[RMDB]
RNA sequence: GGGAACGACUCGAGUAGAGUCGAAAACGGCAGGCCAAGAUGACGUCCCUAUCGGAACAAUGGAGCGACUUGGUAACGCGCCAGAAGAUGGACGCUAUGGAGGUCGCCACUCCAGACGCCAAACACCCUACAAGCAGAGCUUCGGCUCUGCUUGUAGAAAAGAAACAACAACAACAAC
Reactivity to 2A3 in 0.01 (KOAc 150mM, MgCl2 10mM, bicine 150mM(pH8.5), 24C), signal-to-noise 3, nucleotides 027 to 126: c010g030g000c040a060g000g030c010c010a030a050g050a040u120g030a030c000g080u090c000c000c010u040a090u090c080g040g060a090a040c060a120a230u110g010g000a070g000c030g060a100c010u090u130g080g000u210a120a020c060g000c020g000c030c000a010g030a080a040g030a010u140g010g000a050c000g020c020u020a070u070g070g000a000g050g030u080c040g000c010c020a000c000u010c010c000a030g050a110c050g020c040c050a020a060a080c110a080c000c030
Reactivity to DMS in 0.01 (KOAc 150mM, MgCl2 10mM, bicine 150mM(pH8.5), 24C), signal-to-noise 1, nucleotides 027 to 126: c000g000g000c000a100g080g000c080c000a090a290g000a000u040g020a100c000g030u110c000c000c060u040a110u000c100g000g030a160a090c300a060a130u000g000g030a030g000c000g000a230c000u010u030g050g000u130a180a000c130g130c000g010c000c000a020g000a240a260g000a150u000g000g000a140c200g020c000u000a060u000g030g000a300g030g000u000c090g000c300c010a210c010u030c000c030a000g000a010c090g000c020c040a080a030a030c010a000c110c030